This 177-nucleotide RNA was probed chemically with DMS and 2A3. The 2A3 profile rests on 1,332 reads. Source: RMDB library TTRDEL, as collected in RNAgym. Conditions: 150 mM KOAc, 10 mM MgCl2 and 150 mM bicine (pH 8.5), 24 C. DMS adducts were read by reverse transcription with MarathonRT.
RNA sequence: GGGAACGACUCGAGUAGAGUCGAAAAGGAAUUCGAUAUGGAAUUAGGGUAGACAAGAGUGGAUUAUCUCGGAAACGAGCCGAGAUCCACAAGUUUGUCUAUAAUCCUAAUUCCUAAGUCUAUGAAACUUGGACUAAAGGUUCGCCUUUAGUCCAAGAAAAGAAACAACAACAACAAC
Reactivity to DMS in 0.01 (KOAc 150mM, MgCl2 10mM, bicine 150mM(pH8.5), 24C), signal-to-noise 2, nucleotides 027 to 126: g010g040a180a100u000u010c150g010a060u010a300u000g000g000a000a000u020u000a000g010g020g000u000a000g010a050c000a010a010g010a270g000u010g000g000a140u010u030a070u000c000u000c000g000g000a050a040a200c300g000a220g000c010c060g000a000g000a010u000c000c000a010c020a040a060g030u010u010u000g010u000c010u010a060u000a300a110u010c000c000u010a000a010u010u000c000c010u010a000a100g010u000c030u000a090u010g010a090a060a130
Reactivity to 2A3 in 0.01 (KOAc 150mM, MgCl2 10mM, bicine 150mM(pH8.5), 24C), signal-to-noise 1, nucleotides 027 to 126: g060g050a060a100u180u060c110g060a060u050a060u240g030g020a000a000u000u000a020g000g030g020u010a010g000a000c010a000a040g110a010g050u010g000g030a000u130u160a130u300c020u000c000g000g070a180a300a210c120g020a110g160c030c000g000a000g000a040u000c000c000a000c010a080a040g050u000u040u020g000u030c010u000a020u030a020a020u020c000c010u000a000a020u000u000c000c010u030a020a000g000u000c050u050a100u160g150a090a060a120